The record gives the reactivity of an RNA of 177 nucleotides to 2A3 and DMS. It was measured as part of the RMDB library TTRDEL. The RNA was probed in 150 mM KOAc, 10 mM MgCl2 and 150 mM bicine (pH 8.5) at 24 C.

RNA sequence: GGGAACGACUCGAGUAGAGUCGAAAAGAUAUGGACCGCUACAAGAGGUAGGGAAGGAAUCGGAAACGAUGUCCCUACUACCCACCUUGGUCGGUCCUAAGUCAAAAUCGCAUGUUCGCAUGCGAAACAAUCCUGAAUUGUUCGCAAUUCAGGAUUGAAAAGAAACAACAACAACAAC
Reactivity to 2A3 in 0.01 (KOAc 150mM, MgCl2 10mM, bicine 150mM(pH8.5), 24C), signal-to-noise 5, nucleotides 027 to 126: g020a010u040a030u110g000g010a010c000c010g000c100u200a210c160a020a010g030a030g060g010u020a020g060g020g090a050a040g100g100a100a080u010c000g000g030a050a030a020c020g010a010u040g280u150c010c000c000u000a030c000u000a000c000c020c010a170c020c000u010u010g040g040u080c000g000g010u000c010c000u010a080a000g040u000c040a010a020a010a300u050c010g000c010a000u000g020u050u020c110g000c160a000u000g000c000g010a010a000a000
Reactivity to DMS in 0.01 (KOAc 150mM, MgCl2 10mM, bicine 150mM(pH8.5), 24C), signal-to-noise 7, nucleotides 027 to 126: g000a040u000a300u000g010g000a010c010c010g010c130u010a150c020a010a040g000a100g000g010u010a020g010g000g000a120a110g020g000a260a030u000c000g010g010a120a090a170c000g010a010u000g010u000c030c000c010u000a090c010u000a020c020c020c090a200c140c020u000u000g000g000u000c000g010g020u000c000c010u000a010a070g010u010c030a080a070a110a120u000c000g000c000a010u000g000u010u010c230g020c000a010u000g000c000g000a020a070a140
The DMS profile rests on 9,376 reads.
For 2A3, 19,393 sequencing reads were counted.
For DMS the reverse transcriptase was MarathonRT.